[RMDB]
RNA sequence: GGGAACGACUCGAGUAGAGUCGAAAAAAGUAUGUGCUACAGGUGUCCUAAGGAAAUAGUAAGCACUGUGAGCGCUCUUGUCUACAAUAAUAAAUUGUUAGCCAAGAAGGAGCUUUCAGGCCAGUGCGGAGCGAGCACUUCGGUGCUCGCAAAAGAAACAACAACAACAAC
Reactivity to 2A3 in 0.01 (KOAc 150mM, MgCl2 10mM, bicine 150mM(pH8.5), 24C), signal-to-noise 2, nucleotides 027 to 129: a000a000g190u130a060u140g050u000g030c000u020a050c000a020g020g000u000g040u040c010c000u030a090a050g060g040a140a140a080u160a050g110u080a000a150g010c010a000c010u000g000u000g050a010g000c000g000c000u000c000u000u010g000u000c000u020a030c050a030a000u100a160a000u160a160a140a020u000u000g130u130u080a000g000c000c000a020a020g090a020a050g070g000a150g010c020u000u030u050c050a030g020g020c000c010a000g000u000g000c020g010g000a050
Reactivity to DMS in 0.01 (KOAc 150mM, MgCl2 10mM, bicine 150mM(pH8.5), 24C), signal-to-noise 2, nucleotides 027 to 129: a000a010g090u100a010u070g000u020g000c020u000a030c050a000g000g060u020g010u000c070c060u030a060a040g050g000a040a090a080u040a040g000u030a060a100g020c030a120c000u000g050u000g000a000g020c010g040c000u020c010u050u020g010u000c000u070a000c000a000a000u020a150a070u080a140a160a070u030u030g000u030u000a020g000c080c040a060a000g010a040a040g020g000a030g050c080u030u000u030c060a090g050g040c000c000a120g010u040g010c020g030g040a140

This 170-nucleotide RNA was probed chemically with 2A3 and DMS. Source: RMDB library 15KLIB, as collected in RNAgym. The reactions ran in a buffer of 150 mM KOAc, 10 mM MgCl2 and 150 mM bicine (pH 8.5), at 24 C. For DMS, 5,551 sequencing reads were counted.